[RMDB]
Record summary:
Chemical mapping of a 177-nucleotide RNA with DMS and 2A3. For 2A3, 1,186 sequencing reads were counted. The data come from the RNA Mapping Database (RMDB), library OK2TST. Conditions: 150 mM KOAc, 10 mM MgCl2 and 150 mM bicine (pH 8.5), 24 C.
RNA sequence: GGGAACGACUCGAGUAGAGUCGAAAAGAUGCUCGUCCGGUGCUGGAGGCUCAGAGGCUGCGGGAGGCUCAGGAAAGCUGGACCCAUUUGUUAUGGGUGGCGACGACAAAUUAUACGCCAGCCUGUGGCUUUAGAGGGUGUUCGCACCCUCUAAAGCAAAAGAAACAACAACAACAAC
Reactivity to DMS in 0.01 (KOAc 150mM, MgCl2 10mM, bicine 150mM(pH8.5), 24C), signal-to-noise 2, nucleotides 027 to 126: g000a090u000g020c090u000c040g020u000c060c030g010g020u000g030c050u000g010g010a100g000g000c040u010c080a050g030a080g000g000c060u000g020c020g000g030g010a110g000g000c020u010c050a090g000g000a080a070a100g040c030u000g020g000a130c010c020c010a030u000u000u010g010u010u010a070u000g000g030g020u000g010g000c040g010a100c140g020a100c170a040a070a090u000u020a130u010a140c050g030c030c020a060g000c020c000u010g020u000g000
Reactivity to 2A3 in 0.01 (KOAc 150mM, MgCl2 10mM, bicine 150mM(pH8.5), 24C), signal-to-noise 2, nucleotides 027 to 126: g050a020u130g000c020u020c040g080u000c060c020g030g040u040g000c050u040g020g090a040g020g040c020u000c060a050g060a060g110g000c020u060g000c070g010g010g000a000g010g010c010u000c040a010g040g090a120a090a010g000c050u050g020g020a030c010c010c010a040u080u080u140g210u120u180a110u060g030g020g020u000g000g000c010g000a110c020g030a020c070a000a130a010u250u130a130u130a100c040g040c030c000a040g050c020c000u070g020u070g070